Chemical mapping of a 177-nucleotide RNA with DMS and 2A3. For DMS, 1,225 sequencing reads were counted. Source: RMDB library OK1LIB, as collected in RNAgym.

[RMDB]
RNA sequence: GGGAACGACUCGAGUAGAGUCGAAAAGAGCGUCGAGAGACGAAGAGAAGUGCAUAGAUCCACAACGGAGAACGUAAUAAUGCACGCAUGUGGCUUAGUGUCCGGAACAACGGGCACAAGAGGCAGAAUCCGCACCUAUCUUCGGAUAGGUGCGGAUAAAAGAAACAACAACAACAAC
Reactivity to DMS in 0.01 (KOAc 150mM, MgCl2 10mM, bicine 150mM(pH8.5), 24C), signal-to-noise 2, nucleotides 027 to 126: g000a110g050c000g070u000c000g000a280g000a270g000a030c010g000a130a030g000a010g000a070a180g000u010g000c010a030u000a010g000a300u060c000c000a230c160a100a140c220g000g010a070g000a020a220c150g000u100a070a060u000a050a070u000g000c020a000c010g000c100a100u000g000u000g050g050c000u000u010a050g000u020g020u000c000c000g000g040a000a000c300a200a230c000g000g020g070c000a000c040a030a010g000a040g040g000c040a070g000a170
Reactivity to 2A3 in 0.01 (KOAc 150mM, MgCl2 10mM, bicine 150mM(pH8.5), 24C), signal-to-noise 1, nucleotides 027 to 126: g070a060g030c000g000u000c000g080a080g000a000g000a030c030g000a020a020g040a000g020a090a000g000u000g000c000a000u000a050g010a170u010c030c000a080c040a150a140c030g000g060a060g200a070a000c000g230u250a030a030u100a060a000u070g010c000a040c000g150c000a060u100g000u060g050g000c060u000u050a070g000u010g000u060c000c000g030g020a030a300c270a030a080c020g000g000g050c000a000c000a000a030g250a020g000g020c000a000g100a040